[RMDB]
RNA sequence: GGGAACGACUCGAGUAGAGUCGAAAAGUUACACGCUUCGGCGUGUAACAAAUACUGAAACGGUCGCGGAAACGAGAGGACACUCUAGGAGGCAUCCAUGCAAAACCCAUUGCUUCGGCAAUGGGAAGAGAGUAUGUCAGUUCGCUGACAUACUCUCAAAAGAAACAACAACAACAAC
Reactivity to 2A3 in 0.01 (KOAc 150mM, MgCl2 10mM, bicine 150mM(pH8.5), 24C), signal-to-noise 1, nucleotides 027 to 126: g000u000u010a000c000a010c010g000c010u040u040c170g160g000c020g000u000g000u010a000a000c000a000a010a000u090a020c000u040g060a100a070a000c010g010g000u010c010g010c030g120g040a090a070a100c050g010a000g000a020g040g050a020c020a020c080u000c040u050a040g030g030a010g040g020c020a020u020c020c010a020u070g010c020a020a040a040a130c000c000c000a000u010u000g010c000u010u040c180g090g000c020a000a000u000g010g000g020a050a010
Reactivity to DMS in 0.01 (KOAc 150mM, MgCl2 10mM, bicine 150mM(pH8.5), 24C), signal-to-noise 2, nucleotides 027 to 126: g000u000u000a010c000a000c030g020c000u000u020c200g020g030c020g000u000g010u010a010a010c000a040a110a070u010a110c110u000g000a040a100a090c110g000g000u000c040g020c010g030g000a060a050a090c080g020a140g000a050g000g000a050c120a030c100u000c040u010a110g000g000a070g010g010c030a070u000c000c050a080u010g020c130a030a030a080a120c010c000c000a000u010u000g000c000u000u020c150g000g030c000a010a020u020g000g010g000a000a000